Record summary:
The data come from the RNA Mapping Database (RMDB), library M2PK50. This 177-nucleotide RNA was probed chemically with 2A3 and DMS.

RNA sequence: GGGAACGACUCGAGUAGAGUCGAAAACUAUGCGACUUCGGUCGCAUAGAAAAGGUGCAUCGUACGGUACCGAAGUACGAUUAAAGCUCAAAAGAGCUAAUAAAAGCACGCCCUUCGGGGCGUGCAACCAUCUGAUAGGGUUCGCCCUAUCAGAUGGAAAAGAAACAACAACAACAAC
Reactivity to 2A3 in 0.01 (KOAc 150mM, MgCl2 10mM, bicine 150mM(pH8.5), 24C), signal-to-noise 1, nucleotides 027 to 126: c000u000a020u000g000c000g010a010c000u030u040c180g110g020u000c000g020c000a000u010a000g010a010a110a000a030g000g000u020g030c010a010u000c010g000u010a020c040g120g200u050a030c070c080g030a030a010g000u000a000c010g000a010u010u040a030a130a000g020c010u010c100a300a300a130a090g010a000g000c020u030a000a090u090a080a120a000a010g000c000a000c000g020c000c000c000u000u020c200g020g010g020g000c080g000u000g010c020a000a030
Reactivity to DMS in 0.01 (KOAc 150mM, MgCl2 10mM, bicine 150mM(pH8.5), 24C), signal-to-noise 1, nucleotides 027 to 126: c000u000a000u010g010c010g000a000c000u000u000c190g030g000u000c010g000c000a000u030a000g000a060a050a050a150g000g010u010g010c160a050u000c010g020u000a010c010g020g000u000a150c010c020g000a040a130g000u000a000c020g000a030u000u000a070a080a150g000c000u010c000a130a070a060a090g010a010g000c000u000a100a050u000a100a070a110a140g000c000a010c000g020c010c000c000u000u010c200g030g030g000g000c010g010u010g000c000a010a020
Annotation:
For 2A3 the reverse transcriptase was SuperScript II with manganese. The reactions ran in a buffer of 150 mM KOAc, 10 mM MgCl2 and 150 mM bicine (pH 8.5), at 24 C.